[RMDB]
This 207-nucleotide RNA was probed chemically with DMS and 2A3. It was measured as part of the RMDB library RNAMAK. Reactivities are rounded to 0.1 and cut off at 0 and 3. The reactions ran in a buffer of 150 mM KOAc, 10 mM MgCl2 and 150 mM bicine (pH 8.5), at 24 C. For DMS, 3,411 sequencing reads were counted.
RNA sequence: GGGAACGACUCGAGUAGAGUCGAAAACAAUGGCUUUCGAGCCAUUGAAAAAAGAUAUGGACUAAUCUACCCACCUUGAGGAACUACCCUGUCGGAAACGACAGUGGCCUCAAGAGGAUUAGUCCUAAGUCAAAAAAGCGACUAUUCGUAGUCGCAAACAUAAUCGCAGAUUCGUCUGCGAUUAUGUAAAAGAAACAACAACAACAAC
Reactivity to DMS in 0.01 (KOAc 150mM, MgCl2 10mM, bicine 150mM(pH8.5), 24C), signal-to-noise 2, nucleotides 027 to 156: c010a010a000u000g010g010c010u020u000u010c270g010a080g000c020c000a000u000u010g010a000a060a040a120a140a180g020a100u000a300u000g000g010a040c010u000a010a010u000c010u000a060c050c010c060a300c200c000u000u000g000a010g000g000a190a060c100u010a170c030c040c010u000g030u000c000g000g000a110a080a150c000g010a010c000a040g000u020g010g000c000c010u000c000a000a000g000a100g000g000a020u000u000a000g000u000c000c000u020a000a080g000u030c030a000a050a110a060a020a150g020c010g030a030c000u000a060u000u000c180g040u000a010g000u010c000g010c010a020a070
Reactivity to 2A3 in 0.01 (KOAc 150mM, MgCl2 10mM, bicine 150mM(pH8.5), 24C), signal-to-noise 4, nucleotides 027 to 156: c010a000a000u000g000g020c000u110u130u160c300g150a010g000c000c000a000u000u000g010a030a000a010a020a010a000g160a060u180a120u190g000g000a000c000u000a000a000u010c010u060a300c020c010c010a020c020c000u010u000g010a000g010g010a040a070c060u090a090c130c000c010u000g000u010c010g040g030a110a040a060c010g000a000c010a010g000u140g080g000c000c000u000c000a000a000g000a000g000g000a000u010u000a000g000u000c010c000u010a010a000g040u030c030a020a030a050a040a150a010g020c010g010a010c000u020a030u080u090c210g040u060a000g000u000c000g020c060a010a010